[RMDB]
RNA sequence: GGGAACGACUCGAGUAGAGUCGAAAAAGCGAGUAUUCUGGUUUUAGGAAGAUUCUGUGAGCUAGUGCUUCAAUUGCGAACUCUUUUACGUCAUCAGGAAUUACAUAGUCUCUUCCUUCCACGUAGGCCCAGUGUUUUGAUUCGUCAAAACACUGGGAAAAGAAACAACAACAACAAC
Reactivity to 2A3 in 0.01 (KOAc 150mM, MgCl2 10mM, bicine 150mM(pH8.5), 24C), signal-to-noise 2, nucleotides 027 to 126: a000g090c020g000a040g070u130a200u210u040c030u050g120g010u080u070u010u110a050g000g010a040a040g020a020u050u010c000u050g040u040g060a050g000c020u080a030g060u070g210c030u060u100c040a040a140u110u130g050c020g020a090a030c010u030c080u070u110u120u160a100c050g020u030c010a010u070c050a090g030g090a120a020u090u000a050c000a040u040a040g010u000c000u040c000u060u040c000c050u000u010c020c010a050c040g020u050a020g030g110
Reactivity to DMS in 0.01 (KOAc 150mM, MgCl2 10mM, bicine 150mM(pH8.5), 24C), signal-to-noise 2, nucleotides 027 to 126: a060g000c030g000a030g030u010a070u010u020c040u010g000g010u000u010u010u000a080g000g010a020a080g010a020u000u000c020u010g020u000g000a180g020c070u000a130g040u030g000c070u000u000c110a060a120u010u000g030c070g000a100a100c120u000c050u000u010u000u010a130c150g010u010c080a020u000c140a090g010g020a020a050u020u000a180c040a050u000a010g010u010c020u010c000u000u010c010c000u000u000c060c020a030c160g010u000a100g000g020
Chemical mapping of a 177-nucleotide RNA with 2A3 and DMS. DMS adducts were read by reverse transcription with MarathonRT. The data come from the RNA Mapping Database (RMDB), library OK2TST. Reactivities are rounded to 0.1 and cut off at 0 and 3.